[RMDB]
This 177-nucleotide RNA was probed chemically with DMS.
Conditions: 150 mM KOAc, 10 mM MgCl2 and 150 mM bicine (pH 8.5), 24 C.
DMS adducts were read by reverse transcription with MarathonRT.
RNA sequence: GGGAACGACUCGAGUAGAGUCGAAAAAUCGAAAACAGGUUGAAACUUAAGGUCAACCGAGAGAAGAGUGCCGUUGAUCGUCCUUGGAACCGUAAAUUCCUAGGAUUCUCCUUCACACGAGGAAAGGGCGUCAUCGUUGAUUCGUCAACGAUGACGCAAAAGAAACAACAACAACAAC
Reactivity to DMS in 0.01 (KOAc 150mM, MgCl2 10mM, bicine 150mM(pH8.5), 24C), signal-to-noise 1, nucleotides 027 to 126: a030u020c070g000a030a040a070a100c090a140g020g000u020u000g020a050a010a070c090u060u010a200a140g000g000u000c020a010a020c010c000g000a070g030a060g000a190a030g030a140g030u000g000c060c020g050u000u020g000a050u000c150g000u010c050c000u000u000g000g000a000a020c040c060g040u010a200a140a300u000u000c000c000u000a050g000g010a060u000u000c070u000c020c000u010u000c040a060c150a130c270g000a010g030g000a000a130a110g000g010

The DMS profile rests on 659 reads.